[RMDB]
RNA sequence: GGGAACGACUCGAGUAGAGUCGAAAAGGUAUAUAGUGUUACAUCAAGAUCUUGAGAUCUUCUAUGCUAACCUAAUCCUGAGAAGAUUUGAGGUGAACGAAAAAAUUGAGAAAGUUCACUACCUGAACGAUCUCGUAGUGGUUGAGACUCCUCCAGGAAUGCGUAUCAUCUUCGGAUGAUACGCAUUAAAAGAAACAACAACAACAAC
Reactivity to 2A3 in 0.01 (KOAc 150mM, MgCl2 10mM, bicine 150mM(pH8.5), 24C), signal-to-noise 3, nucleotides 027 to 156: g100g040u090a150u020a030u010a070g110u100g030u190u020a000c010a020u050c060a010a020g000a000u000c050u280u300g130a300g000a100u000c000u060u040c090u110a030u000g050c060u040a020a000c000c010u010a010a030u070c010c010u070g040a080g040a160a040g030a090u060u090u210g070a030g000g020u010g010a020a020c050g090a010a130a080a040a000a040u170u120g030a060g060a020a110a000g000u000u010c020a010c060u080a110c010c030u050g040a050a020c030g020a040u000c000u010c030g030u040a060g070u040g080g080u050u040g020a030g000a050c040u020c040c010u050c060c000a020g070g000
Reactivity to DMS in 0.01 (KOAc 150mM, MgCl2 10mM, bicine 150mM(pH8.5), 24C), signal-to-noise 3, nucleotides 027 to 156: g030g020u000a010u010a200u000a030g010u000g010u020u010a020c020a070u010c300a030a030g000a040u000c010u000u000g020a210g010a010u010c000u000u010c070u000a110u000g010c090u000a060a040c010c010u000a040a060u000c010c000u010g010a110g010a130a110g010a110u000u010u010g010a110g020g020u000g010a070a120c080g040a000a020a070a040a110a180u010u000g010a060g010a080a200a300g000u010u000c000a020c010u000a060c080c050u000g010a030a060c050g000a160u000c010u000c010g030u000a080g040u000g040g030u000u000g000a200g000a080c060u000c000c000u010c030c030a110g010g010